An RNA of 177 nucleotides, treated with 2A3 and DMS and read out base by base. Values cover nucleotides 27 to 126. The RNA was probed in 150 mM KOAc, 10 mM MgCl2 and 150 mM bicine (pH 8.5) at 24 C. The DMS profile rests on 1,554 reads. DMS (dimethyl sulfate) methylates the pairing face of unpaired adenines and cytosines.

[RMDB]
RNA sequence: GGGAACGACUCGAGUAGAGUCGAAAACGCGAAGCAUGCGAACGCGCAGCUCGACGAGCACGAAGUCGUGCAGCGCCAGGUCGGCUUCGCCGAUCGCCUGUUCAUCACGAAGGCGGACCUCGUCGAAGGAAAAUAUCACGUUCGCGUGAUAUUUUCCAAAAGAAACAACAACAACAAC
Reactivity to 2A3 in 0.01 (KOAc 150mM, MgCl2 10mM, bicine 150mM(pH8.5), 24C), signal-to-noise 2, nucleotides 027 to 126: c000g000c020g000a040a030g000c090a070u200g050c030g000a030a010c030g000c000g000c050a030g000c010u000c000g010a000c030g000a030g230c150a040c200g070a160a030g010u000c000g010u010g030c010a020g000c010g000c050c010a020g080g000u110c030g030g040c000u130u040c030g000c010c030g010a060u040c010g000c010c020u060g140u140u030c090a190u140c030a050c150g040a060a020g020g000c050g000g080a090c010c030u070c080g150u050c040g050a020a110
Reactivity to DMS in 0.01 (KOAc 150mM, MgCl2 10mM, bicine 150mM(pH8.5), 24C), signal-to-noise 2, nucleotides 027 to 126: c300g010c010g000a050a030g000c020a070u010g000c000g010a090a270c280g050c030g030c050a090g000c030u010c000g000a030c010g010a170g000c250a120c260g000a120a150g020u000c000g010u000g000c020a060g010c040g030c010c040a060g000g010u000c050g000g020c000u000u010c030g020c000c030g000a090u000c080g000c010c010u010g000u000u000c050a130u000c120a070c150g000a070a050g010g000c030g000g000a040c090c010u000c130g030u000c090g000a100a180